[RMDB]
RNA sequence: GGGAACGACUCGAGUAGAGUCGAAAAGAUAUGGAGCGUCGUAACUUCAACAGCAUCUAUCGGAAACGAUAGAUGACAUGAAGCUACGCGCUCCUAAGUCAAAAGCGUAAGGCUUCGGCCUUACGCACGUCUGAAGUAGCUUCGGCUACUUCAGACGAAAAGAAACAACAACAACAAC
Reactivity to 2A3 in 0.01 (KOAc 150mM, MgCl2 10mM, bicine 150mM(pH8.5), 24C), signal-to-noise 1, nucleotides 027 to 126: g080a000u070a010u170g000g030a020g000c080g110u300c050g030u300a020a040c000u030u050c010a150a160c090a200g000c010a000u030c010u020a000u010c000g050g070a080a100a090c000g010a020u020a010g000a000u000g020a020c010a110u100g030a010a000g020c000u000a010c000g000c000g000c000u010c000c000u000a000a000g060u010c020a000a080a110a070g000c010g010u000a000a010g000g000c000u030u120c300g230g020c000c000u000u000a000c010g000c000a000
Reactivity to DMS in 0.01 (KOAc 150mM, MgCl2 10mM, bicine 150mM(pH8.5), 24C), signal-to-noise 1, nucleotides 027 to 126: g010a020u020a300u000g050g000a000g030c000g020u030c030g060u000a000a020c000u000u000c010a040a130c300a300g020c010a000u000c000u000a000u000c000g010g000a100a100a260c000g000a000u000a000g020a020u030g000a020c100a250u000g000a000a000g010c020u000a010c010g030c030g040c000u000c000c000u000a000a080g020u000c060a150a100a110a150g010c000g000u000a000a000g060g020c000u010u010c250g030g000c010c000u000u000a000c000g010c020a020
An RNA of 177 nucleotides, treated with 2A3 and DMS and read out base by base. For DMS, 874 sequencing reads were counted. For DMS the reverse transcriptase was MarathonRT. The 2A3 profile rests on 2,019 reads.